Conditions: 150 mM KOAc, 10 mM MgCl2 and 150 mM bicine (pH 8.5), 24 C. This 207-nucleotide RNA was probed chemically with DMS and 2A3. The 2A3 profile rests on 2,186 reads. The DMS profile rests on 3,815 reads. It was measured as part of the RMDB library OK3TST. For DMS the reverse transcriptase was MarathonRT.
RNA sequence: GGGAACGACUCGAGUAGAGUCGAAAAUGGCUGUUUUAAUUUCAUCAAGUAUCCUAAGACAGAAUUUUCUAAGCCAAAAACCAAGGAACCUAGCUCUACGAUAAAGUUUGAAUUUCAAACCUUUAGUCGUAAGUGAACAAGCACUAUGUUCAAGUCAAUCGUAUGAGUGAUUCGUCACUCAUACGAUAAAAGAAACAACAACAACAAC
Reactivity to DMS in 0.01 (KOAc 150mM, MgCl2 10mM, bicine 150mM(pH8.5), 24C), signal-to-noise 2, nucleotides 027 to 156: u000g010g020c010u010g010u000u010u000u010a040a100u000u000u010c030a220u020c050a150a240g010u010a050u020c080c020u000a040a110g020a060c030a070g030a070a020u000u000u000u010c030u000a070a060g020c050c070a070a080a110a150a080c030c050a110a130g020g010a090a060c030c000u010a210g010c010u000c020u000a000c000g030a050u010a050a040a030g000u000u000u000g000a080a290u000u000u000c000a000a060a010c040c010u010u000u000a090g030u000c000g020u000a010a080g030u000g000a070a080c100a030a130g000c070a060c030u000a060u010g010u000u000c020a050a080g010u010c040a090
Reactivity to 2A3 in 0.01 (KOAc 150mM, MgCl2 10mM, bicine 150mM(pH8.5), 24C), signal-to-noise 4, nucleotides 027 to 156: u050g070g000c020u030g100u070u070u050u090a100a110u060u120u120c090a100u060c060a080a100g060u130a110u100c030c050u070a080a020g010a010c020a020g060a030a020u010u060u090u030c050u120a040a030g020c010c000a090a040a000a000a000c030c020a010a010g040g000a030a020c010c010u000a000g020c010u010c040u060a000c010g000a010u010a020a020a010g000u010u040u020g160a200a210u140u260u170c020a020a020a030c040c020u040u070u010a080g040u030c000g000u020a090a030g010u010g040a030a030c060a130a000g030c040a010c070u040a040u080g020u050u050c030a050a030g100u100c030a050